[RMDB]
RNA sequence: GGGAACGACUCGAGUAGAGUCGAAAAUUCGUACCGAUUCUGUUUUCGUCUCAAGCUCUUCAUUACUACAGCGCAAGUCUACCAUUACCACACCCACACACAGAUAUUACGGCUAAUGUUUAUUAGUUAUAAUGGGGGUUUUCGAACCCCCAUUAUAAAAAGAAACAACAACAACAAC
Reactivity to DMS in 0.01 (KOAc 150mM, MgCl2 10mM, bicine 150mM(pH8.5), 24C), signal-to-noise 3, nucleotides 027 to 126: u010u010c110g020u020a140c080c000g010a070u030u020c060u030g030u000u000u000u000c010g000u000c010u010c040a130a150g000c020u000c010u000u010c030a090u020u010a070c060u010a040c050a080g000c080g030c030a080a110g010u000c040u000a100c060c020a100u010u030a080c070c040a060c060a060c010c010c030a050c020a030c090a080c050a080g010a050u010a020u010u000a070c080g000g000c020u000a040a060u000g000u000u010u010a040u040u000a030g000u010
Reactivity to 2A3 in 0.01 (KOAc 150mM, MgCl2 10mM, bicine 150mM(pH8.5), 24C), signal-to-noise 3, nucleotides 027 to 126: u080u050c030g000u030a040c000c070g010a030u140u010c030u050g060u030u020u050u060c000g020u000c020u010c060a040a120g010c020u000c020u120u090c010a070u040u120a040c020u030a030c060a030g010c010g000c060a050a080g030u020c000u020a110c020c020a030u070u090a050c000c020a020c000a000c030c020c000a010c010a010c010a000c010a020g110a020u070a060u100u140a040c040g020g000c020u040a040a050u030g030u100u020u060a100u020u030a040g050u030